Chemical mapping of a 177-nucleotide RNA with 2A3 and DMS.
The DMS profile rests on 3,521 reads.
The 2A3 profile rests on 6,260 reads.
2A3 adducts were read by reverse transcription with SuperScript II with manganese.
For DMS the reverse transcriptase was MarathonRT.
RNA sequence: GGGAACGACUCGAGUAGAGUCGAAAAGAUAUGGAUCCCUGAGGUGUGUGACGAAGAACUCGGAAACGAGGGAGUCAGACACUACCCACCAGGGAUCCUAAGUCAAACUUUCGCUUCGGCGAAAGAAUCAAUUAAGUACCUUCGGGUACUUAAUUGAAAAAGAAACAACAACAACAAC
Reactivity to 2A3 in 0.01 (KOAc 150mM, MgCl2 10mM, bicine 150mM(pH8.5), 24C), signal-to-noise 1, nucleotides 027 to 126: g000a010u100a050u190g000g000a000u000c010c010c000u000g040a050g050g000u020g010u050g000u000g020a020c020g140a300a180g020a080a040c000u000c000g010g030a070a060a050c010g000a010g000g000g020a020g030u000c000a010g060a030c010a010c010u030a050c040c050c000a080c020c000a000g010g000g000a000u000c000c000u000a040a010g020u000c030a040a090a150c000u020u000u000c000g000c020u050u110c300g180g000c010g020a000a000a010g020a010a140
Reactivity to DMS in 0.01 (KOAc 150mM, MgCl2 10mM, bicine 150mM(pH8.5), 24C), signal-to-noise 4, nucleotides 027 to 126: g020a060u000a300u000g000g000a000u010c000c000c000u000g020a080g010g000u000g010u000g010u000g000a030c000g020a110a100g010a130a220c000u000c000g000g000a110a100a190c020g010a020g010g000g000a070g020u000c000a010g000a030c010a000c010u000a030c040c040c090a300c130c000a000g010g000g010a000u000c000c000u010a020a070g010u000c030a100a080a190c010u000u000u000c000g010c000u000u010c260g030g010c010g000a010a010a010g000a100a140